[RMDB]
RNA sequence: GGGAACGACUCGAGUAGAGUCGAAAAGAUAUGGAGGAUGUGAGAGCAACAGCUACCGGUCGGAAACGACCGAGUAGACAUGCUCGAGCAUCCUCCUAAGUCAAAGGUCAUCCUUCGGGAUGACCAACCAUACGAAACACUUCGGUGUUUCGUAUGGAAAAGAAACAACAACAACAAC
Reactivity to DMS in 0.01 (KOAc 150mM, MgCl2 10mM, bicine 150mM(pH8.5), 24C), signal-to-noise 4, nucleotides 027 to 126: g000a040u000a300u000g020g010a030g010g000a000u010g010u000g000a300g010a010g030c000a020a090c270a190g000c000u010a010c000c010g020g000u000c000g000g010a130a110a220c010g010a010c000c000g000a080g010u000a010g000a020c070a210u000g000c000u000c000g010a300g000c020a010u000c000c010u000c000c000u000a010a070g010u010c020a060a120a130g000g000u000c000a000u000c000c000u000u020c260g030g000g000a000u000g000a000c000c010a010a030
Reactivity to 2A3 in 0.01 (KOAc 150mM, MgCl2 10mM, bicine 150mM(pH8.5), 24C), signal-to-noise 2, nucleotides 027 to 126: g020a020u070a050u190g000g000a020g000g000a010u010g040u030g010a070g000a000g010c010a010a160c070a170g030c000u010a000c010c000g000g000u000c000g030g040a080a060a050c010g000a000c000c020g020a060g010u000a010g020a020c020a040u070g010c000u000c000g010a000g000c000a010u000c000c000u010c000c000u000a000a000g000u000c020a000a040a080g000g000u000c000a010u000c000c020u050u110c300g150g000g000a010u000g000a000c010c000a000a000
Source: RMDB library TTRDES, as collected in RNAgym. Structure probing data (DMS and 2A3) for a 177-nucleotide construct. DMS adducts were read by reverse transcription with MarathonRT. The reactions ran in a buffer of 150 mM KOAc, 10 mM MgCl2 and 150 mM bicine (pH 8.5), at 24 C.